This 177-nucleotide RNA was probed chemically with 2A3 and DMS. The reactions ran in a buffer of 150 mM KOAc, 10 mM MgCl2 and 150 mM bicine (pH 8.5), at 24 C. Reactivities are given for positions 27 through 126. Source: RMDB library OK2TST, as collected in RNAgym. DMS adducts were read by reverse transcription with MarathonRT.
RNA sequence: GGGAACGACUCGAGUAGAGUCGAAAAAAGACAAACGUUGUCCAUUGAUAAAAGGAACUCCCUUCACCGGAGAAGUGUCUCCGAUAAUGGAAAGGUAGUCGACCGUUUGUUCGACGUUAGUAUUUAGGCUAGACUUAUCGUUCGCGAUAAGUCUAGCAAAAGAAACAACAACAACAAC
Reactivity to 2A3 in 0.01 (KOAc 150mM, MgCl2 10mM, bicine 150mM(pH8.5), 24C), signal-to-noise 1, nucleotides 027 to 126: a030a000g060a000c000a000a040a010c020g060u040u050g040u000c050c060a090u070u180g070a070u260a090a090a020a000g070g000a030a010c030u000c000c000c000u000u000c030a020c070c030g000g020a010g030a080a050g250u180g260u090c010u000c000c010g060a050u080a160a100u160g140g000a070a000a000g000g010u030a000g000u040c080g010a100c000c020g030u040u080u060g000u020u010c000g010a050c040g000u050u060a020g000u010a160u030u090u000a100g050
Reactivity to DMS in 0.01 (KOAc 150mM, MgCl2 10mM, bicine 150mM(pH8.5), 24C), signal-to-noise 2, nucleotides 027 to 126: a090a050g000a030c020a080a030a020c000g040u000u000g000u000c040c060a120u000u000g010a170u020a030a050a120a110g000g000a250a010c060u000c030c000c040u000u000c060a090c200c020g010g000a030g020a110a250g020u010g020u000c000u000c000c010g010a060u000a060a110u000g050g010a050a020a060g000g030u040a080g010u000c160g000a080c020c010g000u010u000u010g020u000u000c020g010a060c070g000u010u000a100g010u000a090u010u000u000a080g030